[RMDB]
RNA sequence: GGGAACGACUCGAGUAGAGUCGAAAAGCAAAGCUCAUGUCUAAGUGGAGCAAAACCCCCAUCAACCCGCUCAUUGGUGCAGCUGGGGUCUCGGCGGUGCCUAUGUCCGCACGCGUGGUCAACAAGGCGUGCGUAACGCCUUCGGGCGUUACGCACGAAAAGAAACAACAACAACAAC
Reactivity to DMS in 0.01 (KOAc 150mM, MgCl2 10mM, bicine 150mM(pH8.5), 24C), signal-to-noise 1, nucleotides 027 to 126: g020c120a050a130a160g000c070u000c010a110u010g000u000c150u010a110a100g010u030g000g000a300g000c000a040a030a100a070c080c000c000c010c030a060u000c100a140a150c040c010c050g040c060u010c090a110u010u010g000g020u000g000c110a010g000c010u010g020g050g020g020u010c070u000c060g000g010c030g030g010u000g000c000c020u010a070u020g050u000c090c010g010c020a050c150g040c050g000u000g000g020u090c030a030a100c130a090a010g010g000